[RMDB]
RNA sequence: GGGAACGACUCGAGUAGAGUCGAAAAAAACUUUUGUGACUUGCUGAAACGGGACUAAUCUCCUCACCGAGGCUAAGCAAGUAAAAUACGCCUCUCAUAUCCUUACCUGCGGGUGGUAAGGAAAUAACCUGCAACGCUUCCUUCGGGAAGCGUUGAACAUCAUUACGGUCUUCGGACCGUAAUGAUGAAAAGAAACAACAACAACAAC
Reactivity to 2A3 in 0.01 (KOAc 150mM, MgCl2 10mM, bicine 150mM(pH8.5), 24C), signal-to-noise 1, nucleotides 027 to 156: a000a000a000c140u240u110u070u120g130u050g030a060c000u000u000g000c010u020g070a090a080a040c050g000g030g000a010c010u040a080a110u030c050u030c090c010u040c020a070c030c030g000a010g030g050c070u080a050a000g030c000a000a080g090u110a020a010a010a010u110a020c030g010c010c000u000c020u010c010a100u060a040u260c000c000u000u000a000c010c000u060g090c060g040g100g010u040g010g000u020a000a010g010g000a000a000a000u010a000a000c000c000u090g020c010a000a000c000g000c010u000u000c020c010u000u030c060g120g020g000a000a000g000c000g000u000u000g000a000a000